About this RNA:
An RNA of 177 nucleotides, treated with DMS and 2A3 and read out base by base. The RNA was probed in 150 mM KOAc, 10 mM MgCl2 and 150 mM bicine (pH 8.5) at 24 C. For DMS, 3,062 sequencing reads were counted.
RNA sequence: GGGAACGACUCGAGUAGAGUCGAAAAGAUAUGGAGUGGGUUGUGGUCAACAGCUCGGAAACGAGACAUGACCCAACAACCACUCCUAAGUCAAAGAGGAGCUCGUAGUUCGCUACGAGCUCCUCAACUUCACUAAUAUGUUCGCAUAUUAGUGAAGAAAAGAAACAACAACAACAAC
Reactivity to DMS in 0.01 (KOAc 150mM, MgCl2 10mM, bicine 150mM(pH8.5), 24C), signal-to-noise 3, nucleotides 027 to 126: g010a030u000a300u010g010g000a000g020u000g000g010g010u010u000g000u010g010g000u000c000a040a090c300a140g000c000u000c000g010g000a060a060a200c000g000a020g000a030c100a230u000g000a020c010c000c010a060a000c000a020a060c000c010a010c000u000c000c000u000a030a100g000u000c040a060a100a150g000a010g020g010a000g000c010u010c000g000u000a050g010u000u010c180g020c020u000a000c010g010a010g010c000u000c010c000u000c000a020a050
Reactivity to 2A3 in 0.01 (KOAc 150mM, MgCl2 10mM, bicine 150mM(pH8.5), 24C), signal-to-noise 1, nucleotides 027 to 126: g000a010u100a050u180g010g000a010g010u020g000g090g010u040u020g040u230g000g010u000c010a040a050c050a250g050c020u010c010g030g030a080a100a010c010g020a010g040a040c020a090u070g000a020c030c000c010a000a030c000a010a000c000c010a010c000u000c010c000u000a060a000g030u010c020a130a100a040g010a000g000g000a000g000c020u020c060g000u040a020g040u100u170c300g010c100u000a020c000g000a030g000c000u000c010c030u020c000a030a000
The 2A3 profile rests on 2,827 reads.
Source: RMDB library TTRDEL, as collected in RNAgym.